[RMDB]
RNA sequence: GGGAACGACUCGAGUAGAGUCGAAAAAUGAAUUGAUUCGUCAAUUCAUGACCGCAAGCGAGCCGUAAGGCAUUUUAUGCGUACGCUGGCGAAAGCCUAAAAAUCAUCGUGUCUUCGGACACGAUAACGCUAGCAUGCAAUUCGUUGCAUGCUAGCGAAAAGAAACAACAACAACAAC
Reactivity to DMS in 0.01 (KOAc 150mM, MgCl2 10mM, bicine 150mM(pH8.5), 24C), signal-to-noise 1, nucleotides 027 to 126: a000u000g000a020a000u000u000g000a030u000u010c140g030u000c000a000a000u000u000c010a000u000g010a160c080c010g020c110a030a090g000c060g030a300g000c030c070g000u010a020a060g060g020c040a040u000u000u000u030a070u000g000c050g020u020a090c060g000c040u000g020g030c010g000a120a130a150g020c010c020u000a070a070a020a110a040u010c150a030u000c010g030u000g000u020c010u010u000c240g030g000a000c000a000c020g010a000u010a020a010
Reactivity to 2A3 in 0.01 (KOAc 150mM, MgCl2 10mM, bicine 150mM(pH8.5), 24C), signal-to-noise 2, nucleotides 027 to 126: a000u040g000a000a010u000u010g000a010u030u080c170g010u010c050a000a000u020u000c000a000u030g040a030c030c000g010c100a070a030g060c010g100a060g050c010c060g050u070a080a030g170g000c020a020u000u080u000u080a110u060g000c000g010u010a030c020g040c030u030g030g010c000g040a130a070a000g000c020c000u120a100a100a000a000a010u220c100a030u010c000g000u010g000u020c000u050u050c210g100g000a000c010a000c000g000a000u010a080a010